Chemical mapping of a 177-nucleotide RNA with 2A3 and DMS. It was measured as part of the RMDB library OK2TST. For DMS, 5,218 sequencing reads were counted. For 2A3 the reverse transcriptase was SuperScript II with manganese. For DMS the reverse transcriptase was MarathonRT.
RNA sequence: GGGAACGACUCGAGUAGAGUCGAAAAAACGACUUCUUGGGAGGAAUGGAGGGGAUGCAUCAGAAGAAGUGGACCCAUUUUUGCGAGGCGAUUCUCAUCUUGUGCUUGGAGAGAUCUGGAAUCAAAGGAAUUAUACGUGGUUCGCCACGUAUAAUUCAAAAGAAACAACAACAACAAC
Reactivity to 2A3 in 0.01 (KOAc 150mM, MgCl2 10mM, bicine 150mM(pH8.5), 24C), signal-to-noise 3, nucleotides 027 to 126: a000a000c040g060a020c000u040u050c020u040u080g040g000g010a050g050g000a130a060u110g030g000a050g000g030g000g020a000u050g040c020a040u060c030a020g080a140a000g030a060a010g040u060g020g080a070c010c020c010a060u090u130u050u070u080g030c020g010a020g010g020c010g030a030u090u000c020u000c020a050u000c030u050u090g030u030g030c030u020u080g000g030a060g000a010g010a030u020c030u040g020g050a030a020u090c060a080a050a050g120
Reactivity to DMS in 0.01 (KOAc 150mM, MgCl2 10mM, bicine 150mM(pH8.5), 24C), signal-to-noise 5, nucleotides 027 to 126: a080a070c070g010a080c040u000u000c030u010u000g000g000g000a080g010g000a080a060u000g020g010a100g020g000g020g020a070u010g020c070a070u010c060a070g020a080a050g010a050a080g020u000g020g000a120c050c020c010a120u010u000u000u010u000g020c070g010a070g010g020c060g000a070u000u000c040u000c150a070u010c050u000u000g030u000g010c050u010u010g020g010a110g010a070g010a050u000c060u000g010g010a090a070u000c100a060a090a130g020